Chemical mapping of a 177-nucleotide RNA with DMS and 2A3.
The 2A3 profile rests on 3,710 reads.
For DMS, 5,018 sequencing reads were counted.

RNA sequence: GGGAACGACUCGAGUAGAGUCGAAAAUGCGUAUUGAGCGGUUUAUCAUUCAAUAAGGUCGCAACGGCAUCUGCCACCGGCUGAUACUGUUUUUGCUCUUCAACAAAAGCAUUGUAAUCAUAGAAACUACAGAACUUGAAUUCGUUCAAGUUCUGUAAAAAGAAACAACAACAACAAC
Reactivity to DMS in 0.01 (KOAc 150mM, MgCl2 10mM, bicine 150mM(pH8.5), 24C), signal-to-noise 5, nucleotides 027 to 126: u010g010c040g020u010a080u000u000g010a090g020c060g010g000u000u000u010a090u000c080a070u000u010c060a040a040u020a080a170g010g010u010c040g010c060a080a100c080g030g020c020a110u000c100u000g010c020c030a090c120c080g010g020c090u000g000a040u000a040c050u000g000u000u010u000u000u010g000c010u010c090u000u010c210a060a070c040a010a040a020a040g010c020a020u010u000g000u000a080a070u000c060a090u010a130g000a090a080a070c190
Reactivity to 2A3 in 0.01 (KOAc 150mM, MgCl2 10mM, bicine 150mM(pH8.5), 24C), signal-to-noise 3, nucleotides 027 to 126: u080g000c020g030u090a080u060u130g020a020g000c020g000g040u070u130u080a130u120c090a040u040u220c040a060a080u060a130a060g020g020u040c000g000c050a080a020c030g020g000c010a100u060c120u230g030c000c010a060c030c030g040g000c030u020g010a010u000a090c010u010g100u020u030u010u040u060g030c020u030c000u170u120c050a020a040c010a020a060a010a000g000c000a010u010u090g030u070a070a020u040c020a000u020a160g140a100a090a020c040